[RMDB]
Chemical mapping of a 177-nucleotide RNA with 2A3 and DMS. Source: RMDB library OK2TST, as collected in RNAgym.
RNA sequence: GGGAACGACUCGAGUAGAGUCGAAAAUAAGGAAUGGUACGUGAAAGAAGGAGAUACGAUUUCGCAGUUCGAUAAAGUCUGUGAAGUGCAAAGUGAUAAAGCAGCAGUAACCAUCUCCUGUAGAUAACACUCACCUCCUAUUCGUAGGAGGUGAGUGAAAAGAAACAACAACAACAAC
Reactivity to 2A3 in 0.01 (KOAc 150mM, MgCl2 10mM, bicine 150mM(pH8.5), 24C), signal-to-noise 2, nucleotides 027 to 126: u260a020a010g040g000a020a000u000g020g010u060a070c090g100u060g130a090a060a120g110a070a020g160g040a110g040a030u080a070c060g030a060u060u000u000c000g000c000a030g040u050u020c020g020a030u150a150a200a010g010u010c010u000g000u000g040a000a010g000u080g080c070a070a020a130g050u120g100a130u100a070a120a040g050c060a030g000c010a010g040u010a080a030c000c000a020u040c040u000c090c020u000g010u010a020g000a090u130a080a000
Reactivity to DMS in 0.01 (KOAc 150mM, MgCl2 10mM, bicine 150mM(pH8.5), 24C), signal-to-noise 3, nucleotides 027 to 126: u010a120a100g000g010a040a030u010g000g000u000a040c070g000u020g040a140a090a130g010a130a090g050g000a110g010a130u020a040c150g010a070u020u000u000c040g010c020a050g020u020u000c060g000a110u000a150a070a230g000u000c000u010g030u010g000a020a050g000u000g020c080a070a070a090g050u000g000a100u020a060a060a090g010c080a050g010c030a080g000u010a050a040c030c020a020u000c100u000c000c000u000g020u000a070g000a090u010a060a150
About this RNA
The reactions ran in a buffer of 150 mM KOAc, 10 mM MgCl2 and 150 mM bicine (pH 8.5), at 24 C.